Conditions: 150 mM KOAc, 10 mM MgCl2 and 150 mM bicine (pH 8.5), 24 C.
Structure probing data (2A3 and DMS) for a 207-nucleotide construct.

RNA sequence: GGGAACGACUCGAGUAGAGUCGAAAAACACGAUCGAUCUCACGUGUUCACGAGAGAGUUCUCACGAUCACACGAACGAGAACGAACUCGAGAUCACGUACACGUGUUCUCGAUCGAGAUCGAUCACGUACUCUCACGUACGAACACGUACUCGUGAUACGAUCAAUAACUUCGGUUAUUGAUCGUAAAAAGAAACAACAACAACAAC
Reactivity to 2A3 in 0.01 (KOAc 150mM, MgCl2 10mM, bicine 150mM(pH8.5), 24C), signal-to-noise 7, nucleotides 027 to 156: a000c080a010c060g000a010u010c000g000a010u010c010u000c010a010c010g000u010g000u000u010c020a010c030g010a010g000a000g000a010g030u010u000c010u020c010a050c090g100a180u160c070a060c040a020c170g070a190a030c110g000a010g000a030a000c010g010a050a010c010u000c000g020a020g000a010u010c020a000c010g010u070a010c070a010c050g000u020g000u050u010c080u060c060g090a130u050c040g000a000g000a000u000c010g000a010u010c030a010c120g030u050a050c020u010c010u010c040a010c030g030u050a020c040g010a020a010c020a000c020g020u050a030c030u050c080g030u030g050a030
Reactivity to DMS in 0.01 (KOAc 150mM, MgCl2 10mM, bicine 150mM(pH8.5), 24C), signal-to-noise 3, nucleotides 027 to 156: a140c090a080c050g000a040u000c020g040a030u000c000u020c000a190c010g030u000g040u000u010c020a160c010g010a030g000a040g010a300g000u000u000c000u000c000a150c040g000a170u000c100a180c200a210c130g010a050a120c030g000a020g030a060a030c020g000a200a220c080u000c040g000a070g010a050u010c030a020c050g000u000a060c090a080c060g020u000g000u000u000c020u000c080g000a100u020c020g000a050g020a040u000c010g000a040u010c000a100c130g000u000a070c090u000c010u000c010a060c060g000u010a160c070g000a040a030c000a040c010g030u000a170c100u000c040g000u010g020a300
DMS adducts were read by reverse transcription with MarathonRT.